[RMDB]
RNA sequence: GGGAACGACUCGAGUAGAGUCGAAAAGCCGUGUUCCUUUUCCUCUUGGAGGUUGGAGUCCCCUGGGCGCCCCCACACGGCUAGACGCCUCGGCUGGUUCGCGACGCAGCCCCCCGGCCGUGGAUGCUUUAUACCGUCUGUUCGCAGACGGUAUAAAAAAAGAAACAACAACAACAAC
Reactivity to DMS in 0.01 (KOAc 150mM, MgCl2 10mM, bicine 150mM(pH8.5), 24C), signal-to-noise 2, nucleotides 027 to 126: g000c020c000g030u000g010u020u000c010c000u000u010u010u010c010c000u010c070u030u020g010g020a030g010g000u040u000g000g010a170g000u010c020c010c030c070u020g000g000g010c020g000c010c000c000c010c040a090c040a010c040g000g000c010u000a090g020a150c110g000c000c010u000c020g000g010c010u010g010g030u020u020c100g020c030g030a160c080g000c080a100g000c030c010c020c050c000c010g000g000c050c020g010u000g010g000a060u010g020c120
Reactivity to 2A3 in 0.01 (KOAc 150mM, MgCl2 10mM, bicine 150mM(pH8.5), 24C), signal-to-noise 4, nucleotides 027 to 126: g020c020c020g030u020g020u020u060c040c010u110u090u060u070c020c010u080c030u110u120g140g020a020g030g020u060u090g050g010a040g050u040c000c010c000c030u080g030g020g010c030g040c010c010c000c000c000a010c000a010c000g000g020c000u010a020g060a030c060g030c010c000u000c020g010g020c000u010g000g060u060u090c050g010c030g090a120c060g000c060a050g040c000c000c010c020c020c000g010g020c000c010g000u020g020g020a070u080g010c010
This 177-nucleotide RNA was probed chemically with DMS and 2A3. DMS (dimethyl sulfate) methylates the pairing face of unpaired adenines and cytosines. It was measured as part of the RMDB library RFM100. For 2A3 the reverse transcriptase was SuperScript II with manganese. Values are in units of 0.01, from 0 to 300, in steps of 10. For DMS, 6,561 sequencing reads were counted.